[RMDB]
RNA sequence: GGGAACGACUCGAGUAGAGUCGAAAAUGCUGAUGCUAUAGCUAGAGGAAAUGAAAGAUACAACAAAUUAAAUUCUGGAAUUAAAACCAAGUACUACAAAUUUGACUACAUUCAGGAAACUAUUCGAUCCGAUACAUUUGUCUCUAGUGUCAGAGAAUAUUACCACCGUUUUCGAACGGUGGUAAUAAAAAGAAACAACAACAACAAC
Reactivity to DMS in 0.01 (KOAc 150mM, MgCl2 10mM, bicine 150mM(pH8.5), 24C), signal-to-noise 1, nucleotides 027 to 156: u000g030c010u000g020a120u020g020c010u040a160u000a130g030c000u050a050g000a040g040g000a030a060a130u030g010a140a200a160g000a160u010a010c100a120a170c000a090a080a170u000u040a080a250a160u000u000c010u000g010g000a080a120u000u000a050a090a170a130c100c030a000a050g040u030a050c060u000a140c050a080a010a100u000u010u010g010a090c090u000a050c230a040u000u010c040a130g000g010a040a040a160c100u000a130u000u000c090g000a100u000c040c030g000a120u000a130c010a030u010u010u000g000u010c000u000c000u040a040g000u000g000u000c120a030g010a220g020a080a190
Reactivity to 2A3 in 0.01 (KOAc 150mM, MgCl2 10mM, bicine 150mM(pH8.5), 24C), signal-to-noise 2, nucleotides 027 to 156: u060g000c000u020g010a040u060g080c070u110a060u140a120g010c000u000a000g000a010g040g040a010a040a050u070g040a120a130a040g060a030u120a100c060a130a030c020a060a180a070u080u120a030a040a130u090u060c010u030g020g050a040a080u140u090a150a220a020a000c010c000a000a040g040u060a100c040u040a030c120a030a130a060u050u080u070g020a040c020u050a030c060a070u000u100c020a010g030g000a010a120a060c070u050a210u060u150c080g010a030u030c070c010g000a010u030a080c050a110u010u050u130g150u060c000u040c000u010a030g000u000g000u070c000a000g010a000g030a160a000
Structure probing data (DMS and 2A3) for a 207-nucleotide construct. Values cover nucleotides 27 to 156. For DMS, 1,470 sequencing reads were counted. DMS adducts were read by reverse transcription with MarathonRT. High DMS reactivity at an A or C suggests that its Watson-Crick edge is free. For 2A3 the reverse transcriptase was SuperScript II with manganese.